[RMDB]
RNA sequence: GGGAACGACUCGAGUAGAGUCGAAAAGAUAUGGACCCUAUUGCUUUUGACGACUACUAGGUAUCUUUAUUAUCGGAAACGAUAAUUAAAGAUACCUAGUAGUCGAUAAGCAAGAGGGUCCUAAGUCCAACGUAAGUAUGUUCGCAUACUUACGUUGAAAAGAAACAACAACAACAAC
Reactivity to DMS in 0.01 (KOAc 150mM, MgCl2 10mM, bicine 150mM(pH8.5), 24C), signal-to-noise 7, nucleotides 027 to 126: g000a110u000a300u010g000g000a020c000c010c000u010a090u000u000g000c000u000u000u010u010g020a250c140g010a020c000u000a010c000u000a010g000g010u000a000u000c000u000u000u000a020u010u000a000u000c000g010g000a150a100a260c010g000a010u000a000a010u000u010a000a010a010g000a010u000a000c000c000u000a000g010u000a000g010u000c000g010a020u000a010a010g010c000a000a010g010a030g000g010g010u000c000c000u000a010a080g000u010c050

Structure probing data (DMS) for a 177-nucleotide construct. The RNA was probed in 150 mM KOAc, 10 mM MgCl2 and 150 mM bicine (pH 8.5) at 24 C.